[RMDB]
An RNA of 177 nucleotides, treated with DMS and 2A3 and read out base by base. For DMS, 3,774 sequencing reads were counted. Values cover nucleotides 27 to 126. For DMS the reverse transcriptase was MarathonRT. Conditions: 150 mM KOAc, 10 mM MgCl2 and 150 mM bicine (pH 8.5), 24 C.
RNA sequence: GGGAACGACUCGAGUAGAGUCGAAAAGAUAUGGACUAUCACAGGCUGACCCAUCGUUGAUCUCGGAAACGAGGGAGAUGCAGCUCACAGUAGUCCUAAGUCAAAGCCUAGCCUUCGGGCUAGGCAACUUAUAACGAUGCUUCGGCAUCGUUAUAAGAAAAGAAACAACAACAACAAC
Reactivity to DMS in 0.01 (KOAc 150mM, MgCl2 10mM, bicine 150mM(pH8.5), 24C), signal-to-noise 5, nucleotides 027 to 126: g010a080u000a300u020g000g000a030c020u000a000u000c080a140c240a270g000g000c010u000g010a170c240c280c020a010u000c010g000u000u020g000a050u010c020u000c010g010g010a100a080a160c010g010a040g010g010g000a050g000a020u000g010c010a010g000c000u000c050a150c300a180g000u000a000g010u000c000c000u000a030a100g000u000c020a080a080a110g020c000c010u000a010g010c000c020u000u020c230g020g010g020c010u000a000g000g010c010a000a000
Reactivity to 2A3 in 0.01 (KOAc 150mM, MgCl2 10mM, bicine 150mM(pH8.5), 24C), signal-to-noise 4, nucleotides 027 to 126: g060a010u090a040u150g010g000a000c010u010a020u150c030a020c080a100g010g010c010u010g050a190c060c070c050a030u020c010g280u300u030g020a030u000c020u010c050g060g030a090a080a050c010g000a010g000g000g010a040g000a010u040g010c010a010g000c020u100c040a060c020a010g000u010a000g000u000c030c000u030a150a020g040u040c050a060a110a060g010c000c000u000a000g010c020c010u050u080c300g070g000g000c000u000a010g000g000c000a000a000